[RMDB]
RNA sequence: GGGAACGACUCGAGUAGAGUCGAAAAUAACGGACUAGGAAACUCGAUCUUUUAAGUGGUUAUCCUAGCGAAUCCACGGCGAGGAAACUAGGACACUAACCAUGUGAUCCCGGACGCUAGAAGAAAACCGAUAGUAAACUUUCGAGUUUACUAUCGGAAAAGAAACAACAACAACAAC
Reactivity to 2A3 in 0.01 (KOAc 150mM, MgCl2 10mM, bicine 150mM(pH8.5), 24C), signal-to-noise 2, nucleotides 027 to 126: u150a080a000c050g040g080a050c020u010a000g000g060a060a050a050c030u020c030g060a130u110c160u010u300u040u170a180a050g020u050g050g030u020u040a070u110c010c010u000a010g000c020g000a010a020u010c000c020a060c040g080g000c090g020a020g000g090a100a070a030c020u000a010g020g000a000c010a010c080u020a030a030c030c020a030u100g040u030g030a120u030c030c000c000g000g010a010c020g000c030u020a010g020a170a000g040a020a170a010a060
Reactivity to DMS in 0.01 (KOAc 150mM, MgCl2 10mM, bicine 150mM(pH8.5), 24C), signal-to-noise 3, nucleotides 027 to 126: u010a100a120c130g020g000a130c010u000a000g000g010a060a100a160c010u010c050g000a060u000c110u010u010u020u000a070a170g010u000g000g000u000u000a110u000c010c010u000a020g000c040g010a140a070u000c010c020a100c070g000g000c050g010a080g000g000a060a130a110c010u000a070g000g030a040c170a020c130u030a090a110c180c250a040u000g000u000g000a130u000c000c000c030g020g010a130c070g010c020u000a040g010a110a150g000a050a090a090a120